[RMDB]
RNA sequence: GGGAACGACUCGAGUAGAGUCGAAAACUACGUAGAUGACUACUAUGAUGACGAGGGUUUCGGAGGAAAUCUGGAGAUGUUCUACGGUGGCCGUCCGCCCACUGCAGUAACACCCUCCAUGACACUACGACUAUAGGUGGUUCGCCACCUAUAGUCGAAAAGAAACAACAACAACAAC
Reactivity to 2A3 in 0.01 (KOAc 150mM, MgCl2 10mM, bicine 150mM(pH8.5), 24C), signal-to-noise 4, nucleotides 027 to 126: c060u130a030c120g020u050a030g030a190u180g050a080c020u090a010c010u020a120u150g070a090u110g080a070c080g040a090g030g060g010u020u030u060c050g020g040a030g000g080a030a090a110u050c040u040g000g020a040g000a040u060g000u000u020c010u020a010c020g030g000u000g000g000c020c030g160u130c060c070g020c040c000c010a010c000u010g020c010a000g020u090a010a000c030a040c050c070c000u000c000c000a020u160g030a020c000a020c120u120a050
Reactivity to DMS in 0.01 (KOAc 150mM, MgCl2 10mM, bicine 150mM(pH8.5), 24C), signal-to-noise 2, nucleotides 027 to 126: c000u010a070c120g000u040a000g000a060u040g020a140c070u010a100c010u000a090u000g000a090u010g010a080c060g020a080g000g000g000u010u000u000c090g000g010a070g000g000a070a010a110u000c040u000g010g000a010g000a120u000g000u000u000c000u010a060c060g010g110u000g000g020c000c100g000u090c020c070g000c250c020c000a010c000u010g000c010a070g000u060a020a020c070a040c070c070c000u000c000c020a000u010g020a060c130a110c050u000a080

Description: This 177-nucleotide RNA was probed chemically with 2A3 and DMS. For DMS the reverse transcriptase was MarathonRT. For 2A3 the reverse transcriptase was SuperScript II with manganese. Conditions: 150 mM KOAc, 10 mM MgCl2 and 150 mM bicine (pH 8.5), 24 C.